The data come from the RNA Mapping Database (RMDB), library M2PK50. The record gives the reactivity of an RNA of 177 nucleotides to DMS and 2A3. Reactivities are given for positions 27 through 126.

RNA sequence: GGGAACGACUCGAGUAGAGUCGAAAAUACCGCGUCUUCGGACGCGGUAAGAUCCCGUCGCAAAACCUGAGAGACGGAGAUGAAGAGACUCAAGCUACGCAAUGACUGCCGGAUUCGUCCGGCAGAAUUAGGUUAGUAAGUUCGCUUACUAACCUAAAAAAGAAACAACAACAACAAC
Reactivity to DMS in 0.01 (KOAc 150mM, MgCl2 10mM, bicine 150mM(pH8.5), 24C), signal-to-noise 6, nucleotides 027 to 126: u000a020c010c000g030c010g030u000c000u000u020c220g020g010a020c010g040c000g010g000u000a000a040g000a080u000c010c000c010g010u010c090g010c080a070a050a100a110c090c060u010g000a090g010a100g000a080c060g000g000a080g010a060u010g000a070a070g000a150g000a050c040u000c060a050a090g010c040u010a070c130g010c090a100a070u000g010a190c010u000g000c000c000g000g000a040u000u010c160g000u000c000c000g000g000c000a010g010a020a050
Reactivity to 2A3 in 0.01 (KOAc 150mM, MgCl2 10mM, bicine 150mM(pH8.5), 24C), signal-to-noise 3, nucleotides 027 to 126: u050a000c010c010g000c000g010u000c010u020u040c200g120g000a000c000g010c010g000g000u000a010a000g000a020u010c020c000c000g040u060c030g020c050a080a080a110a200c010c050u110g020a040g000a010g020a120c040g040g010a140g010a050u090g050a050a100g060a010g050a060c020u000c060a050a020g020c020u080a030c070g030c080a030a190u130g090a140c010u000g010c020c000g000g020a010u050u030c180g050u020c060c000g000g000c000a010g000a000a000